[RMDB]
RNA sequence: GGGAACGACUCGAGUAGAGUCGAAAAUGCUUCUUAAUCUCGGCAGUUGCCUUCUCACCGAAAGAGUCCACUUGAUCUUCAUAUUUCUCAUAAAGCACAGGCACAGUGUGGAGCAAAACAAAAGCUAGGUAACGGUAUAGUUCGCUAUACCGUUACCAAAAGAAACAACAACAACAAC
Reactivity to DMS in 0.01 (KOAc 150mM, MgCl2 10mM, bicine 150mM(pH8.5), 24C), signal-to-noise 2, nucleotides 027 to 126: u000g040c020u000u010c090u010u020a140a090u010c060u000c040g000g020c060a050g020u000u020g000c030c080u000u000c070u000c060a100c010c060g060a160a050a090g000a160g000u000c050c020a090c060u020u000g000a060u010c040u000u010c110a110u020a090u010u000u000c040u020c000a010u000a060a090a150g000c070a050c100a030g010g000c000a010c090a070g040u000g020u030g000g000a060g000c140a040a000a050a030c160a050a050a020a050g000c040u000a090
Reactivity to 2A3 in 0.01 (KOAc 150mM, MgCl2 10mM, bicine 150mM(pH8.5), 24C), signal-to-noise 5, nucleotides 027 to 126: u040g010c010u010u030c020u070u110a120a130u040c020u010c030g030g010c020a080g010u110u080g050c010c000u080u010c020u020c010a100c020c000g060a070a110a050g090a020g050u030c030c010a040c010u020u080g060a070u050c010u070u030c060a050u070a170u150u120u000c050u000c010a110u180a170a090a000g010c030a020c030a050g090g000c030a030c040a070g040u020g020u030g110g040a020g030c010a010a050a060a070c110a030a110a040a000g080c040u080a060